This 170-nucleotide RNA was probed chemically with 2A3 and DMS.
For 2A3 the reverse transcriptase was SuperScript II with manganese.
RNA sequence: GGGAACGACUCGAGUAGAGUCGAAAACAGCCCGGGUAAGCCACAGUUCCGACCGAAGGGGACGAGUGGGGAGAAGGGCGCCCCGAGGGGGGUCAUCUGGCAAAGAGAGGAGGAAUUUCGGAAGGAAGAGCGCAUGUGUUCGCACAUGCGAAAAGAAACAACAACAACAAC
Reactivity to 2A3 in 0.01 (KOAc 150mM, MgCl2 10mM, bicine 150mM(pH8.5), 24C), signal-to-noise 3, nucleotides 027 to 129: c040a020g030c000c000c010g020g010g030u050a050a040g030c010c010a070c000a040g030u050u030c030c020g050a080c020c030g050a100a020g020g010g010g010a010c010g020a020g020u070g000g010g010g000a070g010a010a070g000g000g000c030g070c000c000c000c000g020a080g000g020g000g000g000g010u010c000a040u050c020u060g020g000c000a020a110a020g050a020g000a000g010g030a020g020g010a020a010u050u070u070c010g010g010a010a000g000g010a020a020g030a010g010
Reactivity to DMS in 0.01 (KOAc 150mM, MgCl2 10mM, bicine 150mM(pH8.5), 24C), signal-to-noise 5, nucleotides 027 to 129: c120a130g000c000c020c030g050g010g020u000a080a120g050c040c040a040c080a200g000u020u010c050c040g040a110c100c030g050a100a100g000g000g000g000a040c000g030a110g050u010g040g020g030g020a090g040a110a110g030g030g050c230g050c060c070c040c090g040a000g040g030g010g050g010g040u000c090a050u020c030u060g020g030c140a010a010a010g020a000g010a060g060g000a020g040g010a050a010u030u000u070c090g050g000a040a040g020g020a070a060g020a090g010
The 2A3 profile rests on 8,175 reads.